[RMDB]
RNA sequence: GGGAACGACUCGAGUAGAGUCGAAAACGUCCUGCACGAGUGCGUGCAGGGCGAAGCGAGUGGUGACACUCGCAAGCACGUCAACUAUAAGCGCCCAUUAUAGUACAAACACAUAAAGCCCCGAUAUGUGUAGACGUGCAAGGGCGAACGGGGCAAAAUCACUCACGGUAUUCGUACCGUGAGUGAUAAAAGAAACAACAACAACAAC
Reactivity to 2A3 in 0.01 (KOAc 150mM, MgCl2 10mM, bicine 150mM(pH8.5), 24C), signal-to-noise 2, nucleotides 027 to 156: c000g000u000c000c000u010g020c010a000c000g120a190g280u300g150c080g000u000g000c000a010g000g000g000c010g010a010a010g000c000g000a000g000u000g000g020u100g010a040c010a000c010u000c000g000c010a000a010g020c000a000c040g010u000c010a040a060c010u010a050u020a040a000g040c060g160c070c080c030a040u060u030a040u010a010g010u050a070c130a040a190a000c000a000c000a020u040a090a050a000g000c010c000c010c010g010a030u000a000u050g000u010g000u010a040g000a000c010g000u000g000c030a080a110g140g050g010c160g010a070a000c000g050g000g000g000c030a020a030a000
An RNA of 207 nucleotides, treated with 2A3 and read out base by base. For 2A3, 1,113 sequencing reads were counted. The reactions ran in a buffer of 150 mM KOAc, 10 mM MgCl2 and 150 mM bicine (pH 8.5), at 24 C. Source: RMDB library OK3TST, as collected in RNAgym. For 2A3 the reverse transcriptase was SuperScript II with manganese.